[RMDB]
RNA sequence: GGGAACGACUCGAGUAGAGUCGAAAAUUCGGAAGGAAUUCUCCCAAGAAGGUCCAAGAGAACUUUCAAGAAGGAGGAUUUUUCCCCAAGACGCUGGUGGACUCUUGGAAUGGGAAAGAGGAGGGCGACACGUCUAGCUUCGGCUAGACGAAAAGAAACAACAACAACAAC
Reactivity to DMS in 0.01 (KOAc 150mM, MgCl2 10mM, bicine 150mM(pH8.5), 24C), signal-to-noise 4, nucleotides 027 to 129: u070u010c070g000g000a020a060g000g040a000a000u040u050c030u000c010c030c050a060a060g000a000a000g040g020u060c060c040a110a020g030a070g020a080a040c000u000u000u000c080a080a080g000a140a100g040g020a030g000g000a030u040u040u010u000u030c000c030c000c120a070a100g010a050c170g020c020u040g000g000u030g060g010a000c060u020c030u000u000g000g030a060a080u060g000g000g000a020a020a010g020a030g020g030a090g000g000g000c090g050a060c170a060
Reactivity to 2A3 in 0.01 (KOAc 150mM, MgCl2 10mM, bicine 150mM(pH8.5), 24C), signal-to-noise 7, nucleotides 027 to 129: u110u040c020g040g050a030a010g050g030a000a020u090u010c030u010c010c010c010a010a030g010a010a010g020g000u030c050c040a050a000g080a000g010a070a030c030u050u070u050c090a080a040g060a040a040g050g010a010g020g020a020u050u010u000u030u000c000c010c000c010a040a030g060a050c060g010c050u060g000g050u080g030g020a020c010u000c000u050u080g020g030a030a050u080g030g000g010a030a070a000g020a020g020g010a020g010g010g020c030g020a020c030a000